An RNA of 207 nucleotides, treated with 2A3 and DMS and read out base by base. Values are in units of 0.01, from 0 to 300, in steps of 10. For 2A3 the reverse transcriptase was SuperScript II with manganese. Reactivities are given for positions 27 through 156.
RNA sequence: GGGAACGACUCGAGUAGAGUCGAAAAGCUGGUUGCCGGGGGAACCAACCAUGUGAUUAGUCUUGUAAUUUUCAGACCCCCGCCCCAACUUCUGGAGAGGAGAGAAAGGCUGAAGGUUGAGUUGAUCACCAAAGGCCAAUGUCGUGAUCAAUCAUAACAGUAUAAUGACCUUCGGGUCAUUAUACUGAAAAGAAACAACAACAACAAC
Reactivity to 2A3 in 0.01 (KOAc 150mM, MgCl2 10mM, bicine 150mM(pH8.5), 24C), signal-to-noise 2, nucleotides 027 to 156: g040c040u030g030g010u060u010g070c040c060g000g010g020g020g030a040a020c010c000a020a020c060c020a080u160g030u030g060a080u080u070a070g040u060c050u090u170g070u090a100a170u100u110u090u070c010a000g020a220c000c000c010c000c000g060c000c010c000c000a050a100c020u110u080c040u120g030g030a120g030a040g040g000a020g010a010g000a060a010a020g000g010c020u020g040a090a020g050g040u040u060g030a050g050u020u030g060a040u020c010a000c020c000a010a060a050g110g010c010c010a010a020u050g010u030c020g000u000g010a020u020c040a020a040u070c090a050u200a200a060
Reactivity to DMS in 0.01 (KOAc 150mM, MgCl2 10mM, bicine 150mM(pH8.5), 24C), signal-to-noise 1, nucleotides 027 to 156: g040c040u000g030g020u000u010g020c050c050g050g080g030g020g010a080a080c080c030a030a080c020c000a100u000g010u010g020a120u010u000a120g030u000c070u000u000g020u020a110a080u010u000u010u010c060a140g000a240c000c010c020c000c000g020c000c030c010c010a080a170c080u010u000c070u000g000g010a170g020a050g010g000a080g000a100g000a090a080a170g000g000c060u000g010a100a090g030g020u000u000g000a190g000u000u000g010a060u000c000a010c020c020a040a130a190g000g000c020c060a030a060u000g010u010c080g000u000g000a070u000c010a040a070u000c040a070u010a060a300